[RMDB]
RNA sequence: GGGAACGACUCGAGUAGAGUCGAAAACUAGAGGUACGAUCAUGAUCAUGGCUAGCUAGUACCUCGAUCGCUAGGAUCGUACCUAGGAUCACGUACUGAUCUCGGAUCCUAGCUAGCCAUGUGGAUCAGUCAUUCUUCGAUUCGUCGAAGAAUGACUAAAAGAAACAACAACAACAAC
Reactivity to DMS in 0.01 (KOAc 150mM, MgCl2 10mM, bicine 150mM(pH8.5), 24C), signal-to-noise 5, nucleotides 027 to 126: c030u020a080g010a130g000g010u010a080c140g010a020u000c030a250u010g000a060u000c010a010u000g000g000c000u000a020g030c000u000a020g010u000a050c020c060u010c150g020a010u000c040g010c040u000a020g000g010a220u010c260g010u030a080c020c010u000a010g010g000a030u010c000a060c300g000u000a070c090u010g000a010u000c010u000c190g000g000a040u000c030c080u000a010g020c000u000a000g000c000c000a000u000g010u000g010g000a030u000c060
Reactivity to 2A3 in 0.01 (KOAc 150mM, MgCl2 10mM, bicine 150mM(pH8.5), 24C), signal-to-noise 4, nucleotides 027 to 126: c040u070a060g040a050g210g060u120a050c090g010a030u030c060a120u270g130a030u090c000a000u010g040g000c000u000a000g000c000u020a000g030u040a040c000c010u030c040g000a010u030c020g000c270u040a040g050g020a040u130c070g070u160a170c020c000u010a010g010g020a000u030c010a000c120g080u100a050c080u100g030a040u010c050u050c070g070g010a020u050c010c000u000a000g010c000u010a000g000c000c010a000u010g030u010g140g000a020u050c030
Chemical mapping of a 177-nucleotide RNA with DMS and 2A3. 2A3 adducts were read by reverse transcription with SuperScript II with manganese. The reactions ran in a buffer of 150 mM KOAc, 10 mM MgCl2 and 150 mM bicine (pH 8.5), at 24 C. The 2A3 profile rests on 5,068 reads. It was measured as part of the RMDB library OK2TRN.